[RMDB]
The data come from the RNA Mapping Database (RMDB), library TTRDEL. Chemical mapping of a 177-nucleotide RNA with DMS and 2A3. DMS adducts were read by reverse transcription with MarathonRT.
RNA sequence: GGGAACGACUCGAGUAGAGUCGAAAACAAGCGUGUAGAUAUGGACCGAGCUGUACAGCGAAGAACUUCGUCGGAAACGACGAAGGGAGCUGCCAACAGCGUUUGACGUCCUAAGUCGAGGUAGAAAGUGAACCUAGAAGUUCGCUUCUAGGUUCACAAAAGAAACAACAACAACAAC
Reactivity to DMS in 0.01 (KOAc 150mM, MgCl2 10mM, bicine 150mM(pH8.5), 24C), signal-to-noise 2, nucleotides 027 to 126: c050a110a140g030c110g070u010g000u000a060g000a060u000a270u000g000g000a010c000c130g010a180g020c000u000g000u000a070c000a000g000c020g010a090a130g000a080a190c000u000u010c000g040u010c000g000g010a040a060a190c000g010a000c000g000a010a000g000g000g000a060g000c010u000g020c040c050a020a040c000a020g000c000g040u000u010u020g040a070c300g000u000c000c000u000a040a120g000u000c010g000a090g010g000u000a060g020a060a050a110
Reactivity to 2A3 in 0.01 (KOAc 150mM, MgCl2 10mM, bicine 150mM(pH8.5), 24C), signal-to-noise 1, nucleotides 027 to 126: c080a040a030g100c050g070u140g020u020a040g020a030u020a040u080g000g040a000c080c050g020a060g000c000u020g030u020a030c020a000g020c010g170a270a000g000a010a010c000u000u010c000g030u000c000g030g000a010a020a010c020g020a000c030g000a000a010g000g000g000a000g010c020u040g000c080c010a060a000c010a020g000c000g000u060u230u240g040a030c030g030u000c000c000u050a050a030g040u020c010g000a070g040g060u140a140g160a070a150a090
2A3 adducts were read by reverse transcription with SuperScript II with manganese. The DMS profile rests on 1,507 reads. Conditions: 150 mM KOAc, 10 mM MgCl2 and 150 mM bicine (pH 8.5), 24 C.